RNA sequence: GGGAACGACUCGAGUAGAGUCGAAAAUCAGCUCACAGAAGACCAUGCAGAUCGCCCAACGUCUCUACGAAGGUGUGGACCUCGGCGGCACCCGCAUCGGUCUCAUCACCUACAUGAGGACCGACUCGCUAGUGUAGGUCUUCGGACCUACACUAGCAAAAGAAACAACAACAACAAC
Reactivity to 2A3 in 0.01 (KOAc 150mM, MgCl2 10mM, bicine 150mM(pH8.5), 24C), signal-to-noise 2, nucleotides 027 to 126: u070c010a030g040c000u050c010a080c020a080g170a130a000g040a090c010c020a000u060g000c020a010g020a090u080c050g040c020c000c000a070a040c010g040u030c020u000c000u080a050c080g100a120a040g060g000u100g010u100g040g060a040c030c010u040c070g010g010c030g060g000c040a080c000c000c010g000c030a060u070c050g000g000u000c000u050c000a000u040c010a020c020c010u190a130c040a060u060g010a060g050g040a000c040c020g060a060c040u040c110
Reactivity to DMS in 0.01 (KOAc 150mM, MgCl2 10mM, bicine 150mM(pH8.5), 24C), signal-to-noise 1, nucleotides 027 to 126: u010c030a070g000c040u000c010a060c170a010g000a080a080g010a070c040c000a080u010g000c010a080g030a060u000c070g010c070c020c030a090a160c160g000u000c050u000c010u010a070c030g000a140a060g000g030u000g000u010g020g000a020c010c010u000c300g010g000c020g010g020c060a180c090c060c060g040c090a060u000c070g010g000u000c020u010c010a050u010c080a030c040c020u000a060c110a080u000g000a040g000g000a080c040c020g000a140c160u000c140
The data come from the RNA Mapping Database (RMDB), library OK2TST. The record gives the reactivity of an RNA of 177 nucleotides to 2A3 and DMS. DMS adducts were read by reverse transcription with MarathonRT. The reactions ran in a buffer of 150 mM KOAc, 10 mM MgCl2 and 150 mM bicine (pH 8.5), at 24 C. Reactivities are given for positions 27 through 126. In probing experiments dimethyl sulfate is read out at A N1 and C N3, which are open when not base-paired.